RNA sequence: GGGAACGACUCGAGUAGAGUCGAAAACGGUCAUACGAAAGGACAUAUGCGGGCGAUUGCCCGCGGCGACGUCGGUUGCCCGUCGAUGGAUUCCAUUGAGGCGAUGAGCGAAAUCCUCGAUGCCGACAUGGGUAUGUUAGUCGACGCUGCCGAACGCCCUAUGCGUAGGGUUCGCCCUACGCAUAGGAAAAGAAACAACAACAACAAC
Reactivity to DMS in 0.01 (KOAc 150mM, MgCl2 10mM, bicine 150mM(pH8.5), 24C), signal-to-noise 1, nucleotides 027 to 156: c030g020g020u000c000a170u000a300c110g050a080a140a110g000g050a080c060a050u020a070u000g040c000g040g000g000c030g040a130u000u010g080c000c020c000g000c030g000g000c000g000a020c000g020u010c050g030g050u000u000g020c080c110c060g030u010c000g070a030u040g030g020a110u010u020c010c030a130u020u020g080a300g000g010c190g050a200u020g000a110g030c070g050a110a100a080u000c100c030u000c100g020a100u000g010c000c000g070a210c300a080u000g000g000g020u000a020u000g060u000u020a150g020u000c000g000a050c020g030c000u000g020c000c000g020a050a140c020g000c020
Reactivity to 2A3 in 0.01 (KOAc 150mM, MgCl2 10mM, bicine 150mM(pH8.5), 24C), signal-to-noise 4, nucleotides 027 to 156: c030g020g030u080c050a090u140a250c100g140a090a140a070g090g030a050c050a060u220a080u290g010c020g020g000g000c070g300a300u140u300g000c000c000c000g000c000g000g000c000g000a090c060g070u030c000g000g040u000u010g010c050c060c000g010u000c000g000a010u050g030g050a020u120u000c010c000a000u000u040g040a020g000g000c000g070a130u190g010a180g040c110g050a140a110a100u170c020c010u030c010g030a090u270g000c000c000g030a050c010a010u020g010g010g070u160a060u130g180u090u090a010g040u000c000g000a000c000g000c030u000g010c010c000g010a050a020c010g020c000
Structure probing data (DMS and 2A3) for a 207-nucleotide construct.
The reactions ran in a buffer of 150 mM KOAc, 10 mM MgCl2 and 150 mM bicine (pH 8.5), at 24 C.
For DMS the reverse transcriptase was MarathonRT.
For 2A3 the reverse transcriptase was SuperScript II with manganese.
The data come from the RNA Mapping Database (RMDB), library OK3TST.
The DMS profile rests on 1,462 reads.
In probing experiments dimethyl sulfate is read out at A N1 and C N3, which are open when not base-paired.